[RMDB]
RNA sequence: GGGAACGACUCGAGUAGAGUCGAAAAAUUAGCCGCGCGAACCUCUGCAACGGAAGAUCAUUCAUAGCAACAAUACAUUAGUUUCCAGUGAAUUGCUGCCGUCAGCUUGAAAAAAGGGGCCACUCAGCGUUUACGCUUUGUUCGCAAAGCGUAAACGAAAAGAAACAACAACAACAAC
Reactivity to 2A3 in 0.01 (KOAc 150mM, MgCl2 10mM, bicine 150mM(pH8.5), 24C), signal-to-noise 6, nucleotides 027 to 126: a010u150u100a030g010c000c000g000c000g000c000g030a020a020c000c000u040c010u050g010c020a050a030c020g040g020a070a020g030a130u100c040a030u100u070c020a030u070a090g020c030a020a060c010a040a080u110a120c040a080u070u080a050g020u010u020u050c030c050a010g010u010g040a020a040u040u060g010c000u020g030c020c000g030u040c010a040g020c040u060u110g080a070a070a000a000a020a010g020g000g030g000c000c010a030c020u040c020a020g030
Reactivity to DMS in 0.01 (KOAc 150mM, MgCl2 10mM, bicine 150mM(pH8.5), 24C), signal-to-noise 3, nucleotides 027 to 126: a100u030u040a110g030c010c000g000c100g000c030g020a040a090c030c040u000c050u000g000c050a140a030c140g020g000a050a030g010a090u020c090a090u040u000c040a060u000a120g020c060a040a060c080a040a060u030a050c080a060u030u010a100g030u030u010u000c050c010a100g040u010g020a030a080u020u000g000c060u000g000c040c040g020u000c040a060g000c060u010u020g000a000a030a030a050a050a030g000g000g020g000c030c050a030c030u000c070a100g010